Source: RMDB libraries RFM100 and RFMREP, as collected in RNAgym.
Structure probing data (DMS and 2A3) for a 177-nucleotide construct.
The RNA was probed in 150 mM KOAc, 10 mM MgCl2 and 150 mM bicine (pH 8.5) at 24 C.
For DMS the reverse transcriptase was MarathonRT.
[RMDB]
RNA sequence: GGGAACGACUCGAGUAGAGUCGAAAACCGAUGCAUACGGGGUCGCUCCAGGCGCCGAUGGGAUACGGCGGGUGCUCCCCCGCGCGUCCCGGCGCAGCUCGGCCGGCGUCGAUGAGGGGACUCAAUCAUACCCCUUAUGCUUCGGCAUAAGGGGUAUAAAAGAAACAACAACAACAAC
Reactivity to DMS in 0.01 (KOAc 150mM, MgCl2 10mM, bicine 150mM(pH8.5), 24C), signal-to-noise 4, nucleotides 027 to 126: c040c000g010a070u050g010c060a140u010a100c110g000g000g000g010u000c030g030c040u020c020c120a120g000g010c000g040c000c000g000a110u020g030g000g000a060u010a010c030g000g010c000g010g000g000u050g020c150u050c110c120c000c000c010g030c020g010c020g000u010c010c000c000g020g020c080g010c050a090g020c090u010c160g010g000c150c030g010g000c030g030u010c010g020a130u010g000a120g000g000g010g010a140c050u000c000a090a120u070c160
Reactivity to 2A3 in 0.01 (KOAc 150mM, MgCl2 10mM, bicine 150mM(pH8.5), 24C), signal-to-noise 3, nucleotides 027 to 126: c000c000g020a090u170g030c100a010u020a150c120g000g010g000g030u020c010g030c080u050c010c010a000g070g000c000g010c000c000g090a140u180g020g030g010a020u030a070c010g000g000c000g040g010g000u050g040c020u070c000c000c000c000c000g000c000g000c000g040u000c000c000c010g010g000c010g000c010a040g050c040u090c060g100g010c010c010g020g030c010g050u020c040g100a140u100g040a110g000g020g020g030a020c000u000c040a010a090u090c030